[RMDB]
RNA sequence: GGGAACGACUCGAGUAGAGUCGAAAACGCAUGCGAGAGCAUGCGGCUAAGCUUCGGCUUAGUAAGAGCAUUUUAGGAUUUUUGGCUCCCCGGCGUGUCUCGAACCAUGCCGGGCCAAACCCAUAGGGCUGGCGGUCCCUGUGCGGUAAAAAUUCAAGCGACAUCGCACGUUCGCGUGCGAUGUGGCAAAAGAAACAACAACAACAAC
Reactivity to DMS in 0.01 (KOAc 150mM, MgCl2 10mM, bicine 150mM(pH8.5), 24C), signal-to-noise 2, nucleotides 027 to 156: c000g000c000a010u000g020c000g000a300g010a300g050c020a000u020g020c000g010g000c000u000a000a000g010c000u010u030c300g030g000c020u010u000a010g040u010a050a110g010a040g020c010a010u000u000u000u000a070g010g020a040u000u000u000u010u020g000g000c000u000c000c050c010c010g020g000c030g050u000g000u010c080u010c240g000a170a130c240c010a010u010g000c010c020g000g030g040c050c010a020a050a090c010c010c010a050u000a080g010g000g050c030u000g010g030c070g000g010u000c000c000c020u010g030u000g000c110g030g010u000a020a020a000a020a020u020u000c020a160a250
Reactivity to 2A3 in 0.01 (KOAc 150mM, MgCl2 10mM, bicine 150mM(pH8.5), 24C), signal-to-noise 4, nucleotides 027 to 156: c000g000c000a000u000g010c000g010a040g000a000g050c000a000u000g000c000g000g010c000u000a000a000g000c000u020u160c300g120g000c000u000u000a000g000u020a090a040g000a000g000c000a010u000u000u010u000a020g010g000a000u000u020u000u000u010g000g000c000u010c020c000c000c010g000g000c010g010u010g010u010c080u060c300g080a060a040c030c000a010u010g000c000c000g000g000g000c010c000a020a010a000c000c000c000a000u010a000g010g000g010c030u060g090g080c080g060g040u120c000c000c000u000g000u000g020c170g000g000u030a000a000a000a000a010u010u010c030a040a020

Description: Source: RMDB library OK3TST, as collected in RNAgym. The record gives the reactivity of an RNA of 207 nucleotides to DMS and 2A3. The reactions ran in a buffer of 150 mM KOAc, 10 mM MgCl2 and 150 mM bicine (pH 8.5), at 24 C. The DMS profile rests on 3,510 reads.